[RMDB]
RNA sequence: GGGAACGACUCGAGUAGAGUCGAAAACGAAGUGCUACGGCACUUCGAACGGUGGUUCGUGAGAACCACCGAACCGCGGCUCGUGAGAGCCGCGGAAGCCAUGCGUGAGCAUGGCAAGCAUGACGUGAGUCAUGCAACAAUCCACUUCGGUGGAUUGACCAGAGUGCUACGGCACUCUGGAAAGUUAAGAUGUGAUCUUGCUUCCUUAUACAAUUUUGAGAGGUUAAUAAGAAGGAAGUAGUGCUAUCUUAAUAACCCUCUCUGCUAAGAGCAUAUUCGUAUGCUCUAAAAGAAACAACAACAACAAC
Reactivity to 2A3 in 0.01 (KOAc 150mM, MgCl2 10mM, bicine 150mM(pH8.5), 24C), signal-to-noise 2, nucleotides 027 to 266: c000g000a000a000g000u000g000c000u040a040c220g110g000c010a000c020u020u000c000g010a140a010c020g020g000u000g000g000u000u000c010g030u040g060a080g020a030a000c000c000a000c000c000g020a010a000c010c000g000c000g020g000c030u030c040g020u050g150a260g010a000g220c000c010g000c000g000g000a010a030g010c010c000a000u000g000c010g040u160g010a010g040c010a000u010g020g000c010a000a040g010c000a000u000g000a020c000g040u110g080a080g000u000c010a000u000g000c000a010a020c000a000a000u000c000c000a000c000u050u020c090g120g010u010g000g000a010u000u010g040a010c000c000a000g000a000g010u010g000c000u020a000c140g090g010c010a000c000u010c000u000g000g010a040a040a000g010u020u010a010a010g030a030u140g160u100g300a300u150c020u010u000g000c010u010u020c000c000u070u030a100u100a270c110a130a230u150u100u180u180g010a030g000a010g020g010u040u090a100a060u190a280a080g180a030a010g000g010a020a000g020u010a020g040u010g090c010u040a020u010c000u040u000a040a020u050a080a070c020c000c040u030c000u000c000u010g020c040u050a020

Structure probing data (2A3) for a 307-nucleotide construct. 2A3 adducts were read by reverse transcription with SuperScript II with manganese. It was measured as part of the RMDB library POS240.